[RMDB]
Chemical mapping of a 177-nucleotide RNA with DMS and 2A3. The RNA was probed in 150 mM KOAc, 10 mM MgCl2 and 150 mM bicine (pH 8.5) at 24 C. The 2A3 profile rests on 1,558 reads. For DMS, 2,270 sequencing reads were counted.
RNA sequence: GGGAACGACUCGAGUAGAGUCGAAAACGAAGCCGGGCCCUGUGGAGUGUUUCCACCACCACAUUCCCUCGCUCGGAGGCCCCAUCUUCUUCCUCAGACCAGGUUGGUGGGUCUUCCUGGGGAAGACACGUCACUGUACGUUCGCGUACAGUGACGUAAAAGAAACAACAACAACAAC
Reactivity to DMS in 0.01 (KOAc 150mM, MgCl2 10mM, bicine 150mM(pH8.5), 24C), signal-to-noise 2, nucleotides 027 to 126: c160g010a170a160g000c090c070g000g000g000c030c120c070u000g030u020g020g000a050g000u020g030u000u020u000c030c020a020c030c040a080c050c040a080c040a070u000u000c010c010c010u000c090g000c040u010c060g010g010a100g000g020c070c020c010c110a110u010c080u010u010c010u000u000c000c020u000c050a020g010a140c120c100a130g000g000u000u010g010g000u000g000g050g020u000c060u000u000c080c030u000g010g030g000g010a030a010g000a070c300
Reactivity to 2A3 in 0.01 (KOAc 150mM, MgCl2 10mM, bicine 150mM(pH8.5), 24C), signal-to-noise 1, nucleotides 027 to 126: c030g060a110a020g080c050c000g000g000g000c000c040c060u050g070u150g030g040a040g000u050g040u040u110u020c040c020a000c030c000a030c000c010a030c000a030u020u030c000c040c030u040c030g040c040u000c010g010g010a040g090g040c000c000c000c000a050u040c060u130u000c010u040u000c000c000u060c010a050g030a150c070c030a010g100g010u090u100g030g070u060g020g000g020u040c030u060u080c010c020u030g010g010g020g020a010a020g040a010c030